[RMDB]
RNA sequence: GGGAACGACUCGAGUAGAGUCGAAAAUCGCCUUGGCUGCCUAAUUCAAGGAAUUAGCGUGCCUUCAUGCUAAGGGUUUGAUAUCUGCUAAAACCCGGUGCAUUCAUCAAUGCAGGUUAAGCCAAAGAAACGGCUCACGAAUUCGUUCGUGAGCCAACGUUAGACAUUACUUCGGUAAUGUCUAACGAAAAGAAACAACAACAACAAC
Reactivity to DMS in 0.01 (KOAc 150mM, MgCl2 10mM, bicine 150mM(pH8.5), 24C), signal-to-noise 2, nucleotides 027 to 156: u010c080g010c040c020u030u000g010g010c000u000g000c050c030u000a000a080u010u000c030a150a150g050g010a100a160u000u010a050g020c110g010u000g000c050c020u000u020c090a060u010g010c020u010a300a170g000g000g000u000u000u000g000a220u010a080u000c030u010g020c080u000a110a040a030a050c010c000c000g020g050u010g030c000a080u000u000c080a130u000c090a080a150u000g020c040a020g010g020u000u000a100a090g010c020c010a040a060a110g000a100a090a170c080g000g000c000u000c000a020c000g000a030a070u000u000c250g010u000u000c000g010u000g000a010g030c000c000a010a000
Reactivity to 2A3 in 0.01 (KOAc 150mM, MgCl2 10mM, bicine 150mM(pH8.5), 24C), signal-to-noise 5, nucleotides 027 to 156: u070c030g100c010c000u030u040g000g000c010u040g040c020c020u050a050a040u050u050c100a180a110g200g000a090a040u030u020a020g040c080g060u060g020c000c020u040u130c100a060u080g010c010u030a010a050g010g010g010u010u000u000g060a050u030a100u170c080u100g030c060u110a050a000a020a010c000c000c000g030g010u010g010c010a040u060u210c010a060u050c060a130a120u120g040c010a000g000g040u050u130a070a010g010c030c010a090a060a030g110a010a110a010c130g000g000c000u000c000a000c010g000a020a010u060u100c140g070u090u010c000g000u030g020a000g000c000c000a000a000